[RMDB]
This 207-nucleotide RNA was probed chemically with 2A3 and DMS. For 2A3, 1,652 sequencing reads were counted. For DMS the reverse transcriptase was MarathonRT. Conditions: 150 mM KOAc, 10 mM MgCl2 and 150 mM bicine (pH 8.5), 24 C. Source: RMDB library OK3TST, as collected in RNAgym. The DMS profile rests on 2,048 reads.
RNA sequence: GGGAACGACUCGAGUAGAGUCGAAAAAGAAAAUCUGGGCAUUGAAUAAGGGACACAGAAACGCCAUUUCUUUCAUCCUUUUCCCUAGCCUAGCAUUGAAGCUACACCCAGCCCUCAAAUGUGUGCAUCAGGCUUGCACCCUCCGCUUGCAAAUGUAGUUUUAAUCCUCAUUCGUGAGGAUUAAAACAAAAGAAACAACAACAACAAC
Reactivity to 2A3 in 0.01 (KOAc 150mM, MgCl2 10mM, bicine 150mM(pH8.5), 24C), signal-to-noise 3, nucleotides 027 to 156: a000g030a000a080a020a030u050c020u010g000g000g030c030a070u070u130g050a200a030u170a080a060g010g000g020a010c040a000c000a080g070a060a050a010c070g050c060c040a100u040u070u000c020u000u130u070c020a050u060c010c000u040u000u040u000c000c000c010u000a010g000c020c010u000a050g010c070a040u050u090g040a060a010g020c010u050a030c010a070c030c010c010a020g010c020c020c000u040c000a070a100a090u190g050u010g010u030g070c000a010u050c070a070g080g000c040u030u020g030c010a010c020c000c000u020c020c020g010c030u060u070g020c030a010a020a280u130g030u090a040
Reactivity to DMS in 0.01 (KOAc 150mM, MgCl2 10mM, bicine 150mM(pH8.5), 24C), signal-to-noise 1, nucleotides 027 to 156: a090g000a100a050a040a080u000c020u010g010g000g040c020a170u000u000g030a130a160u000a050a090g000g040g040a130c080a100c170a130g010a100a030a070c040g030c130c020a300u010u000u000c010u010u010u010c050a090u000c010c000u030u000u000u000c040c000c010u000a080g000c030c030u000a090g030c040a070u010u000g010a120a080g020c020u000a040c080a080c030c000c010a040g000c030c020c020u000c030a000a030a050u000g020u000g000u010g020c000a080u010c060a120g020g030c130u000u010g030c000a120c020c000c020u000c020c030g000c180u000u000g010c030a000a020a080u000g000u000a110